[RMDB]
RNA sequence: GGGAACGACUCGAGUAGAGUCGAAAAGACACCAUUCGCAGAUGACCUCCUCGUUGGUUGGUGUCGGUAAUGUUGUCAGUCACAGGCAACAGUUAACGAUCUGCGUAAAUAAAAAGAGAAGAACAAACAUGCUAAUGCCAUUCGUGGCAUUAGCAUGAAAAGAAACAACAACAACAAC
Reactivity to 2A3 in 0.01 (KOAc 150mM, MgCl2 10mM, bicine 150mM(pH8.5), 24C), signal-to-noise 4, nucleotides 027 to 126: g000a000c000a010c030c000a030u140u130c010g000c010a000g000a020u010g010a000c000c000u000c000c000u170c080g190u210u160g000g000u000u020g000g000u010g020u010c000g000g030u090a080a050u010g000u000u000g000u000c020a040g140u170c070a090c040a150g010g000c000a000a000c000a000g030u000u050a010a000c030g020a000u000c000u000g020c020g010u010a000a020a020u160a020a040a010a030a000g190a010g040a130a020g040a040a020c030a070a110a010
Reactivity to DMS in 0.01 (KOAc 150mM, MgCl2 10mM, bicine 150mM(pH8.5), 24C), signal-to-noise 2, nucleotides 027 to 126: g010a020c000a020c000c010a030u040u020c020g000c000a040g000a020u000g000a050c000c000u000c060c030u030c130g000u050u040g010g020u000u000g000g000u010g000u000c000g000g010u000a070a060u000g000u000u000g000u000c020a080g060u020c300a100c300a060g010g030c000a000a010c040a070g000u010u010a000a010c000g020a010u010c000u000g040c020g000u100a060a090a080u060a060a100a120a160a040g000a130g000a070a150g010a060a050c190a090a030a100